[RMDB]
RNA sequence: GGGAACGACUCGAGUAGAGUCGAAAAGAUAUGGAAUCCCGUAGGGAGAGCCUCGGAAACGAGUGCUCAUCGAUCUAUAGGAUUCCUAAGUCAAAGCGGGUAUCCUAGUUCGCUAGGAUACCCGCAACAGGGAAAGUAAGUUCGCUUACUUUCCCUGAAAAGAAACAACAACAACAAC
Reactivity to DMS in 0.01 (KOAc 150mM, MgCl2 10mM, bicine 150mM(pH8.5), 24C), signal-to-noise 2, nucleotides 027 to 126: g010a020u000a300u010g000g000a030a020u000c000c010c020g010u010a020g000g000g010a030g000a010g010c020c000u000c000g000g010a060a080a140c010g010a010g000u010g020c010u000c000a080u000c110g000a070u000c010u000a010u000a090g020g000a020u000u000c000c010u010a020a090g000u000c030a060a110a140g010c010g000g000g000u000a000u000c000c000u000a010g010u000u010c260g010c000u000a000g000g000a010u000a000c000c000c000g010c000a010a020